RNA sequence: GGGAACGACUCGAGUAGAGUCGAAAAGCUGAUAAAGAAAUCGAAUUGCACAUCGAAAACGUAAACGGCAUAAGCUCAAAUGCGUUUAGCGUAAACAAAAAAGACGCGCUACCAGUUAAACUUAAAAAGGCUGAGCAUGUUGGUAAGUGCAAGCAAGGACAAGAGGGUUUUUCGAAACCCUCUUGUCAAAAGAAACAACAACAACAAC
Reactivity to 2A3 in 0.01 (KOAc 150mM, MgCl2 10mM, bicine 150mM(pH8.5), 24C), signal-to-noise 1, nucleotides 027 to 156: g020c050u030g040a150u140a260a140a070g130a020a180a010u090c030g000a030a110u040u000g000c010a010c020a090u080c070g110a060a000a040a080c020g020u080a040a050a020c020g110g000c000a020u020a130a070g020c010u030c140a000a060a180u070g000c060g010u000u060u050a040g000c000g030u080a050a070a130c110a070a290a010a030a000a000g100a040c060g010c000g000c020u010a050c050c000a010g010u060u130a080a120a140c040u080u170a090a000a090a000a000g050g000c020u030g010a000g030c020a000u050g020u000u020g090g020u120a130a050g000u000g020c010a000a000g010c060a070a030g160
Reactivity to DMS in 0.01 (KOAc 150mM, MgCl2 10mM, bicine 150mM(pH8.5), 24C), signal-to-noise 1, nucleotides 027 to 156: g010c020u000g020a200u000a130a070a140g010a250a230a100u000c030g010a030a070u000u010g020c000a050c030a240u010c010g020a110a020a030a130c070g000u020a030a110a150c020g030g090c100a120u000a110a100g020c020u000c040a060a130a160u000g000c000g020u000u000u000a050g020c030g000u000a010a080a300c070a000a090a070a180a260a170g010a080c070g030c040g010c070u000a030c050c020a080g000u020u000a020a070a030c030u000u020a020a040a070a070a050g010g060c080u000g020a080g000c120a230u000g010u000u000g010g020u000a050a210g070u000g020c020a000a010g030c080a130a150g020
Source: RMDB library OK3TST, as collected in RNAgym. This 207-nucleotide RNA was probed chemically with 2A3 and DMS. The reactions ran in a buffer of 150 mM KOAc, 10 mM MgCl2 and 150 mM bicine (pH 8.5), at 24 C. The 2A3 profile rests on 534 reads. Values cover nucleotides 27 to 156. For DMS the reverse transcriptase was MarathonRT. 2A3 adducts were read by reverse transcription with SuperScript II with manganese.